[RMDB]
RNA sequence: GGGAACGACUCGAGUAGAGUCGAAAACUCAUCAAGCCAUGCCUAAAUUAUUACAGCAGUUCCUCCCACACUGUAAUGUGCCUAUGAAUCACCUGGGAGUUUUGUUCAAGUGCAGAUUCUGAUUCAGUAAGUCCAGCGACAUUUUCCAAAAUGGUGAUCCUGAGUAUUAUUUCGAUAAUACUCAGGAAAAAGAAACAACAACAACAAC
Reactivity to DMS in 0.01 (KOAc 150mM, MgCl2 10mM, bicine 150mM(pH8.5), 24C), signal-to-noise 4, nucleotides 027 to 156: c020u000c020a130u000c040a050a110g010c000c030a150u000g020c020c030u010a060a070a140u000u010a070u000u000a050c020a060g020c000a120g000u000u000c060c040u010c100c020c020a110c050a030c030u000g000u000a030a040u000g020u000g030c030c020u010a080u000g010a090a070u000c030a060c180c030u000g000g030g020a090g020u000u000u000u000g020u010u000c040a070a080g030u010g030c030a070g020a120u000u000c030u000g000a090u010u000c040a100g010u010a050a110g000u010c020c030a080g020c040g020a040c040a070u010u000u010u000c050c060a040a070a080a080u010g020g010u000g010a150
Reactivity to 2A3 in 0.01 (KOAc 150mM, MgCl2 10mM, bicine 150mM(pH8.5), 24C), signal-to-noise 4, nucleotides 027 to 156: c040u050c030a050u080c020a080a010g030c030c010a040u090g010c020c020u120a130a130a100u220u170a080u070u100a070c040a030g050c020a030g040u070u040c020c040u010c000c020c000a010c000a000c010u030g030u030a010a060u040g040u040g020c000c030u120a110u120g050a040a020u050c010a040c070c020u020g020g020g000a050g030u020u010u080u100g030u040u090c080a070a040g020u020g070c020a000g000a050u040u050c010u050g020a080u010u090c020a000g010u040a060a010g040u020c040c020a000g030c010g040a020c020a030u040u060u050u070c010c000a010a300a020a020u300g050g020u120g050a010
This 207-nucleotide RNA was probed chemically with DMS and 2A3.
The data come from the RNA Mapping Database (RMDB), library OK3TST.
2A3 adducts were read by reverse transcription with SuperScript II with manganese.
The RNA was probed in 150 mM KOAc, 10 mM MgCl2 and 150 mM bicine (pH 8.5) at 24 C.